[RMDB]
RNA sequence: GGGAACGACUCGAGUAGAGUCGAAAAAUGUUUUUGUGCCACACUUUACAAUAGCACAAGGACUAUCUAGCCAAGAAUUCGAAGAUAUUUUUGGUCAAGUAGCAUUAGCUGGGGUAGACCAUAAAGACCUUAGGAUAUCAUUCGUGAUAUCCUAAGGAAAAGAAACAACAACAACAAC
Reactivity to 2A3 in 0.01 (KOAc 150mM, MgCl2 10mM, bicine 150mM(pH8.5), 24C), signal-to-noise 9, nucleotides 027 to 126: a010u100g020u010u000u000u010u010g010u000g000c050c000a120c040a050c090u120u210u230a150c140a180a150u110a140g000c000a000c000a010a010g000g000a010c010u010a050u060c040u040a030g020c010c010a020a020g050a040a040u150u130c140g140a140a020g070a110u130a080u130u050u000u010u010g010g000u040c030a060a070g060u060a010g090c090a110u270u090a040g030c030u030g010g010g040g060u090a040g040a110c010c000a020u130a020a090a010g110a050
Reactivity to DMS in 0.01 (KOAc 150mM, MgCl2 10mM, bicine 150mM(pH8.5), 24C), signal-to-noise 6, nucleotides 027 to 126: a060u030g000u010u000u010u000u000g010u010g030c040c100a100c290a130c220u020u010u060a090c230a060a110u030a150g010c000a000c030a020a050g000g000a050c000u000a050u010c030u010a140g010c030c000a010a040g000a010a010u000u000c070g000a100a090g000a070u020a000u000u000u000u000u000g000g010u010c060a070a100g010u020a030g020c040a140u020u020a110g010c040u010g000g010g020g020u000a060g000a120c020c020a060u030a040a080a060g000a180